RNA sequence: GGGAACGACUCGAGUAGAGUCGAAAACAGCAGCGCCAUAUGCAUGGCGCGGAUGCGGCCGAUCGCGGCCUGAACCAACGCCGACGCGCCGCCGUCGGGCAUCAACCCCACGUUGGUGUGAGCGAGCUGUGAACCAGUGCUUCGGCACUGGUUCACAAAAAGAAACAACAACAACAAC
Reactivity to DMS in 0.01 (KOAc 150mM, MgCl2 10mM, bicine 150mM(pH8.5), 24C), signal-to-noise 1, nucleotides 027 to 126: c080a080g020c010a180g010c000g030c000c000a000u000a080u010g030c210a100u010g030g020c010g030c010g000g060a030u000g000c140g010g010c020c050g020a060u010c300g000c010g030g040c020c000u000g010a080a170c060c050a000a110c140g000c000c000g000a020c010g000c070g000c070c050g000c050c010g030u000c160g010g010g000c050a050u000c120a040a160c040c020c050c050a200c060g010u000u000g000g000u000g010u000g000a080g010c070g000a120g030c170